[RMDB]
RNA sequence: GGGAACGACUCGAGUAGAGUCGAAAAGAUAUGGAAACGAACUACAGCCUAAGGUUCGAAGAACUCGGAAACGAGGGAGAACCGAUGGCUGCGUUUCCUAAGUCAAACCCACAGUUCGCUGUGGGAACACUUUUAAGUACUUCGGUACUUAAAAGUGAAAAGAAACAACAACAACAAC
Reactivity to 2A3 in 0.01 (KOAc 150mM, MgCl2 10mM, bicine 150mM(pH8.5), 24C), signal-to-noise 6, nucleotides 027 to 126: g010a020u090a040u160g000g010a000a000a000c010g040a060a070c130u180a070c300a010g000c000c000u080a160a050g000g010u010u010c010g050a100a030g020a040a010c010u010c010g010g040a070a060a050c010g010a000g020g000g000a060g000a010a010c010c010g010a030u120g000g000c000u000g000c000g000u000u000u000c000c000u010a080a010g030u010c030a050a060a290c020c030c000a000c000a000g030u100u140c210g010c130u000g000u010g000g000g010a040a010
Reactivity to DMS in 0.01 (KOAc 150mM, MgCl2 10mM, bicine 150mM(pH8.5), 24C), signal-to-noise 6, nucleotides 027 to 126: g010a040u010a300u010g010g000a010a010a010c000g000a070a050c090u020a300c000a000g010c010c000u010a240a230g000g000u000u000c000g000a100a100g020a140a200c010u000c010g010g000a100a080a180c000g010a010g000g000g000a080g000a020a000c010c000g000a120u010g000g000c000u000g000c000g000u000u000u000c000c000u000a040a050g000u000c020a060a130a240c000c000c000a000c020a010g010u000u010c200g010c000u000g020u000g000g010g010a080a110